[RMDB]
RNA sequence: GGGAACGACUCGAGUAGAGUCGAAAAACCUUAUUUUGAGAAGCUGAGGGAUUUGGCCCAUAGAAGCUUCAGCAACCGACUUUAAAUAGCACGGUGCUAAUACCAACGAGCAAUUCGAAUGAUAAGUAAAACGUUGACAAGUUCGCUUGUCAACGAACAAUGAAUUAGAGUUCGCUCUAAUUCAUUGAAAAGAAACAACAACAACAAC
Reactivity to DMS in 0.01 (KOAc 150mM, MgCl2 10mM, bicine 150mM(pH8.5), 24C), signal-to-noise 2, nucleotides 027 to 156: a120c020c010u000u000a080u000u020u000u010g000a210g010a090a100g010c010u000g000a140g020g000g010a180u000u000u000g070g040c000c000c000a170u000a140g010a130a090g000c020u000u010c010a020g030c000a030a050c000c000g000a120c000u000u010u010a100a160a130u000a010g010c000a060c020g010g000u000g020c000u010a030a090u000a030c060c040a080a150c140g000a070g050c030a120a130u000u000c020g000a110a110u000g020a070u000a070a040g010u000a070a030a050a200c000g010u000u000g010a020c000a010a000g000u000u000c280g040c000u000u020g010u010c000a010a000c000g010a030a040
Reactivity to 2A3 in 0.01 (KOAc 150mM, MgCl2 10mM, bicine 150mM(pH8.5), 24C), signal-to-noise 3, nucleotides 027 to 156: a010c050c000u090u050a240u080u160u130u140g130a090g000a030a010g020c010u020g020a020g000g030g010a030u020u060u030g030g000c030c000c010a060u180a090g030a010a000g000c000u010u000c000a010g000c010a000a020c000c000g050a010c020u120u080u210a160a210a250u220a160g000c030a000c020g000g000u000g000c000u010a020a010u050a060c010c000a010a100c040g010a020g080c080a150a040u090u080c050g090a060a040u090g090a100u100a210a010g060u130a070a100a030a020c010g000u000u000g000a000c000a000a020g000u050u060c090g050c170u010u000g000u000c000a000a000c000g000a010a010

The data come from the RNA Mapping Database (RMDB), library M2RFPK. An RNA of 207 nucleotides, treated with DMS and 2A3 and read out base by base. DMS adducts were read by reverse transcription with MarathonRT. For DMS, 3,121 sequencing reads were counted. The RNA was probed in 150 mM KOAc, 10 mM MgCl2 and 150 mM bicine (pH 8.5) at 24 C. 2A3 adducts were read by reverse transcription with SuperScript II with manganese.